RNA sequence: GGGAACGACUCGAGUAGAGUCGAAAAGAGCCGACAGAGAAGUCGGGAAGCGACGAGAGAGAAUAGAAGACAUUGGAAUUCGAGAUACUGCCACAAAAUGACAGACGUCGCCAUAUUCUCAGAGAAGACGAUGAGGACCAUUCGUGGUCCUCAUCGUAAAAGAAACAACAACAACAAC
Reactivity to DMS in 0.01 (KOAc 150mM, MgCl2 10mM, bicine 150mM(pH8.5), 24C), signal-to-noise 1, nucleotides 027 to 126: g000a200g000c050c000g030a010c000a150g030a120g000a160a060g060u000c000g050g000g030a180a060g000c000g000a000c010g000a030g000a180g000a140g010a150a060u080a000g000a010a050g000a140c140a150u070u000g040g030a240a130u000u000c000g000a300g000a160u000a150c000u000g000c040c000a100c300a000a120a110a230u030g000a050c000a010g000a300c080g000u000c000g000c060c040a180u000a140u000u000c000u120c050a150g000a060g020a160a030g000
Reactivity to 2A3 in 0.01 (KOAc 150mM, MgCl2 10mM, bicine 150mM(pH8.5), 24C), signal-to-noise 1, nucleotides 027 to 126: g020a100g130c000c000g000a010c010a000g290a000g100a300a000g000u000c000g070g000g000a000a020g000c000g020a000c070g000a000g000a000g010a000g000a070a030u020a020g220a120a050g080a000c110a090u080u210g040g220a060a140u050u000c100g000a000g060a150u030a150c010u030g010c000c030a020c070a000a090a000a090u280g000a040c010a070g060a010c000g010u060c000g000c030c000a000u000a070u040u000c000u000c000a000g000a020g040a140a060g230